[RMDB]
RNA sequence: GGGAACGACUCGAGUAGAGUCGAAAAGGCGACAAGUUCGCUUGUCGCCACGGGGUCCAGCCUGGAAAGGCUGGAGGUAUUGCAAUGGUCGGGCCGCCAUUCAACGCGGGACAUUCGUGUCCCGCAAAAGAUCUAUGCUUUUCGAAGCAUAGAUCUUAAAAGAAACAACAACAACAAC
Reactivity to DMS in 0.01 (KOAc 150mM, MgCl2 10mM, bicine 150mM(pH8.5), 24C), signal-to-noise 4, nucleotides 027 to 126: g010g010c000g000a010c000a010a000g010u000u010c240g000c000u000u000g010u000c000g000c000c000a020c150g000g000g000g000u000c000c000a010g020c000c000u000g000g030a120a140a020g010g010c000u000g010g010a000g000g000u000a070u010u000g000c160a020a030u000g010g000u000c010g000g010g000c000c010g000c010c010a010u000u000c030a100a130c240g010c000g010g010g010a020c000a050u000u010c180g010u000g010u000c000c000c000g010c000a010a010
Reactivity to 2A3 in 0.01 (KOAc 150mM, MgCl2 10mM, bicine 150mM(pH8.5), 24C), signal-to-noise 3, nucleotides 027 to 126: g000g000c000g010a000c000a010a000g020u020u050c150g050c140u000u000g010u020c000g000c000c000a010c020g060g000g000g020u010c000c000a000g010c000c000u060g100g100a190a110a030g010g000c000u000g010g030a010g000g010u110a140u120u270g030c080a000a020u010g000g000u010c020g020g000g000c000c000g000c000c000a000u000u020c030a070a060c110g000c000g000g010g000a000c000a020u030u060c150g060u050g000u010c000c000c010g000c000a010a000
An RNA of 177 nucleotides, treated with DMS and 2A3 and read out base by base. The RNA was probed in 150 mM KOAc, 10 mM MgCl2 and 150 mM bicine (pH 8.5) at 24 C. The 2A3 profile rests on 5,319 reads. It was measured as part of the RMDB library M2PK50. For DMS, 6,111 sequencing reads were counted. For 2A3 the reverse transcriptase was SuperScript II with manganese.